[RMDB]
RNA sequence: GGGAACGACUCGAGUAGAGUCGAAAAAGCUGAAACAUGUCGAAUAUUUGUCACUACCCGCCUUCAGUUCUGCCAUCCCGGAACAGCUCUAUUUCAUUCAGCGACGGGAAUAUUUUCGUGUCAGUAAGCUAAAUUAUGGAUUCGUCCAUAAUUUAGCAAAAGAAACAACAACAACAAC
Reactivity to DMS in 0.01 (KOAc 150mM, MgCl2 10mM, bicine 150mM(pH8.5), 24C), signal-to-noise 8, nucleotides 027 to 126: a090g010c020u000g010a100a090a110c080a060u010g010u000c100g000a080a060u000a070u000u000u000g010u000c040a070c060u000a150c040c020c030g010c060c030u000u010c070a080g000u000u010c040u000g010c060c060a150u000c020c030c000g010g000a060a070c080a110g000c040u000c050u000a060u000u010u000c110a110u000u010c100a060g010c030g010a060c040g010g010g000a050a070u000a040u010u000u000u000c050g010u000g010u000c040a050g000u010a100a130
Reactivity to 2A3 in 0.01 (KOAc 150mM, MgCl2 10mM, bicine 150mM(pH8.5), 24C), signal-to-noise 4, nucleotides 027 to 126: a010g020c010u010g030a040a080a030c030a050u110g060u130c060g080a120a030u070a080u080u100u120g070u050c020a010c080u080a050c010c000c030g010c010c000u070u050c020a040g010u060u030c010u030g020c010c020a050u030c010c010c000g030g010a070a040c020a020g040c020u000c010u070a190u080u210u110c070a070u130u050c020a040g020c010g070a020c020g000g030g060a020a000u070a060u040u090u040u060c060g010u030g080u040c020a020g030u080a120a000